[RMDB]
RNA sequence: GGGAACGACUCGAGUAGAGUCGAAAAGCGGUUGAAAUACCGCUAAGUCACCAUUAUUGGAAAGACGAGUUGAAAUAAGUCCGGUACAGGGUUUUGUUAGUACCAAAAGGUGGGAAAGCAAGAUAGGCAUCUUUAUAAAGUUCGCUUUAUAAAGAUGAAAAGAAACAACAACAACAAC
Reactivity to 2A3 in 0.01 (KOAc 150mM, MgCl2 10mM, bicine 150mM(pH8.5), 24C), signal-to-noise 2, nucleotides 027 to 126: g000c000g020g010u010u020g060a050a040a010u110a040c000c000g000c000u000a000a000g010u000c020a060c110c000a030u040u150a080u230u210g030g000a040a080a050g010a010c030g010a060g060u060u130g150a070a090a110u050a080a000g020u010c020c030g040g010u030a040c010a020g140g030g000u020u050u010u060g000u020u020a010g000u000a010c010c000a100a020a050a150g170g170u150g000g010g000a000a000a000g000c010a000a000g030a060u030a050g140g000
Reactivity to DMS in 0.01 (KOAc 150mM, MgCl2 10mM, bicine 150mM(pH8.5), 24C), signal-to-noise 6, nucleotides 027 to 126: g010c000g020g000u000u010g000a110a160a110u000a020c000c000g010c000u010a020a100g010u010c060a140c010c010a090u010u010a120u000u000g010g010a100a130a120g010a030c020g000a120g010u000u000g010a100a130a090u010a050a100g000u000c000c010g000g010u000a070c060a080g010g010g000u000u000u000u000g020u000u000a060g000u000a100c030c000a050a080a100a130g020g030u000g000g010g000a080a150a300g010c020a010a020g000a040u000a060g010g010